Overview
This 207-nucleotide RNA was probed chemically with DMS and 2A3. Conditions: 150 mM KOAc, 10 mM MgCl2 and 150 mM bicine (pH 8.5), 24 C. The DMS profile rests on 2,054 reads. For 2A3, 2,380 sequencing reads were counted. For DMS the reverse transcriptase was MarathonRT.
RNA sequence: GGGAACGACUCGAGUAGAGUCGAAAAGCAACAGAUAACUGGAUGCAGCGUAGGAUUCUACGCAUAUCCAGUACGAAUGGUACCUGUAAAGAAAAUAAGUAUGGAUGUACAAGUACCAACAUACGGUUAAGCGAUGGUGAUGUCAAUCACAUUUGCACGAUUUUAAUGACUUCGGUCAUUAAAAUCGAAAAGAAACAACAACAACAAC
Reactivity to DMS in 0.01 (KOAc 150mM, MgCl2 10mM, bicine 150mM(pH8.5), 24C), signal-to-noise 2, nucleotides 027 to 156: g010c090a130a160c040a090g030a130u020a090a080c000u000g010g000a030u010g030c180a200g060c000g000u040a010g010g010a230u000u040c000u000a010c000g070c010a240u010a020u000c010c000a030g040u010a110c030g010a170a170u010g050g050u010a020c050c060u000g020u000a040a020a120g030a210a060a020a240u000a070a190g010u010a020u000g000g040a180u010g040u010a020c040a000a040g030u020a010c010c000a040a140c030a100u000a070c070g000g020u000u010a130a070g020c000g050a130u000g000g000u000g010a050u000g000u000c230a110a130u000c040a030c000a090u000u000u000g040c050a170
Reactivity to 2A3 in 0.01 (KOAc 150mM, MgCl2 10mM, bicine 150mM(pH8.5), 24C), signal-to-noise 5, nucleotides 027 to 156: g040c030a000a110c000a070g080a120u130a110a050c000u000g000g000a000u050g080c150a060g010c100g000u020a010g040g150a300u300u110c000u010a000c000g000c000a010u020a010u010c000c000a000g000u010a020c000g090a110a100u080g000g000u020a000c000c000u000g030u050a030a070a050g160a040a080a030a040u190a120a030g090u120a080u140g050g060a060u140g010u040a010c010a020a000g010u010a010c000c010a030a020c040a020u160a040c040g100g000u100u100a080a030g020c010g020a020u080g080g090u060g020a040u030g130u150c080a080a040u020c000a040c010a030u010u050u170g040c040a040